[RMDB]
RNA sequence: GGGAACGACUCGAGUAGAGUCGAAAAGAUAUGGAUAUUGACUUCUUUUGACGCCUAUGGAUCGGAAACGAUCCUAAGGGCGAUAAGAAGGAGAUAUCCUAAGUCAAAAGAGAUCUUCGGAUCUCAACGUAGUGUAUAUGUUCGCAUAUACACUACGAAAAGAAACAACAACAACAAC
Reactivity to 2A3 in 0.01 (KOAc 150mM, MgCl2 10mM, bicine 150mM(pH8.5), 24C), signal-to-noise 9, nucleotides 027 to 126: g030a020u100a040u170g010g000a000u010a010u010u040g030a040c010u020u020c020u060u180u080u170g300a190c050g000c000c000u050a090u150g010g000a010u000c010g010g030a060a060a070c010g000a000u040c010c000u000a020a030g020g000g000c000g000a000u040a020a010g000a010a000g020g000a020g000a000u000a000u000c000c000u000a090a030g060u010c030a010a010a090a180g010a010g010a000u010c020u090u140c300g150g000a010u010c000u000c020a010a020
Reactivity to DMS in 0.01 (KOAc 150mM, MgCl2 10mM, bicine 150mM(pH8.5), 24C), signal-to-noise 9, nucleotides 027 to 126: g010a040u000a300u000g000g010a010u000a010u000u000g010a300c000u000u000c000u000u000u000u010g020a250c080g010c000c000u000a300u010g000g000a010u000c000g000g000a120a090a230c010g000a000u000c000c000u000a020a100g000g010g010c010g020a040u000a000a020g010a020a000g000g010a300g000a000u000a000u000c000c000u000a030a100g010u010c060a090a060a120a180g000a010g010a010u000c000u000u020c240g020g000a020u000c000u000c000a040a100

The data come from the RNA Mapping Database (RMDB), library TTRDES. Structure probing data (2A3 and DMS) for a 177-nucleotide construct. Values cover nucleotides 27 to 126.